[RMDB]
RNA sequence: GGGAACGACUCGAGUAGAGUCGAAAAGAACCGCGAUUCGUCGCGGUUCGAGCGCCGUAGCGCGCAACGGCCUAACGGCAGCAUUAGCGCGCAGCUGCCGACGAUCGGGUGGUUUCGACCACCCGAAGUGUAUCCUAAUAUUCGUAUUAGGAUACACAAAAGAAACAACAACAACAAC
Reactivity to 2A3 in 0.01 (KOAc 150mM, MgCl2 10mM, bicine 150mM(pH8.5), 24C), signal-to-noise 9, nucleotides 027 to 126: g010a000a000c000c000g000c000g010a010u030u060c170g020u010c000g130c000g000g000u000u000c000g000a000g000c050g000c000c020g170u150a050g020c050g000c000g000c130a030a030c040g080g010c000c020u080a200a050c030g010g000c010a010g000c020a090u050u130a070g050c040g000c010g000c070a010g000c000u000g000c020c000g070a120c070g090a110u040c000g000g010g000u000g010g020u020u060u140c210g070a020c000c000a000c000c000c000g000a000a000
Reactivity to DMS in 0.01 (KOAc 150mM, MgCl2 10mM, bicine 150mM(pH8.5), 24C), signal-to-noise 9, nucleotides 027 to 126: g000a010a010c000c000g020c000g010a020u000u010c180g030u000c010g030c000g000g010u000u000c000g000a070g010c090g010c010c050g020u000a060g010c070g010c010g020c010a070a050c090g010g000c010c050u010a090a170c060g010g010c000a020g010c010a090u000u010a110g010c030g000c020g030c050a150g000c000u000g010c010c000g010a110c210g010a130u000c000g000g010g030u000g000g010u000u000u010c180g010a030c000c000a010c000c000c000g000a000a020
The record gives the reactivity of an RNA of 177 nucleotides to 2A3 and DMS. For 2A3, 41,022 sequencing reads were counted. For DMS, 28,284 sequencing reads were counted. Values cover nucleotides 27 to 126.